[RMDB]
RNA sequence: GGGAACGACUCGAGUAGAGUCGAAAACAUGUCUCGCCACGGUAUGACGCGGCUUUAUGCCGCCCUCCAUCUUCCGCCCGAGGUCUUGCUGCCCCCUGGCACAUACCGCACCGCAUCGUAUUUGCUGCGAUAUUCAGUACUUCGGUACUGAAUAUCGAAAAGAAACAACAACAACAAC
Reactivity to DMS in 0.01 (KOAc 150mM, MgCl2 10mM, bicine 150mM(pH8.5), 24C), signal-to-noise 5, nucleotides 027 to 126: c090a110u010g000u010c010u000c050g020c040c050a120c080g010g010u000a060u010g000a100c180g020c000g000g000c010u000u020u010a110u010g020c000c000g020c010c050c010u010c010c010a090u000c080u000u010c050c030g020c030c070c050g010a090g010g010u010c040u000u000g020c050u010g000c030c020c030c040c040u010g000g010c050a070c070a070u010a070c050c050g000c060a120c050c050g000c030a050u010c110g010u000a090u000u010u000g020c060u010g010
Reactivity to 2A3 in 0.01 (KOAc 150mM, MgCl2 10mM, bicine 150mM(pH8.5), 24C), signal-to-noise 4, nucleotides 027 to 126: c030a050u100g030u010c020u000c070g010c040c030a060c040g010g020u090a060u140g110a050c050g020c000g020g020c000u070u210u060a190u230g010c000c000g020c010c000c000u000c010c000a070u040c040u100u030c020c020g010c020c000c030g010a040g000g040u020c030u070u090g040c050u050g030c030c000c010c000c030u010g030g010c010a010c000a050u060a020c020c020g010c050a040c030c040g030c020a050u080c030g020u050a070u100u100u070g040c040u060g010